[RMDB]
RNA sequence: GGGAACGACUCGAGUAGAGUCGAAAAGCAUGCGAAACGUCCGCUGAUGCAUGUGACGAGGCAUGCUUCCUUUUGACCAUCUUUUCGCUCGUCAUUUCAUGCAUGGUCAAGGAAUUGCGGACGGAAAGGGAACCUUCCUCUUCGGAGGAAGGUUCCCAAAAGAAACAACAACAACAAC
Reactivity to 2A3 in 0.01 (KOAc 150mM, MgCl2 10mM, bicine 150mM(pH8.5), 24C), signal-to-noise 2, nucleotides 027 to 126: g050c000a000u170g050c020g160a050a120a000c000g000u010c020c010g000c000u070g130a070u230g030c000a000u000g080u020g000a000c050g030a040g000g100c000a000u000g040c000u000u010c020c000u160u140u030u260g000a040c000c000a070u060c050u100u130u080u300c160g020c080u050c030g040u040c140a210u060u200u220c150a080u230g100c020a000u090g010g000u030c000a000a070g000g020a000a040u190u170g000c050g000g050a000c000g000g000a100a010a000
This 177-nucleotide RNA was probed chemically with 2A3. The RNA was probed in 150 mM KOAc, 10 mM MgCl2 and 150 mM bicine (pH 8.5) at 24 C. The 2A3 profile rests on 416 reads.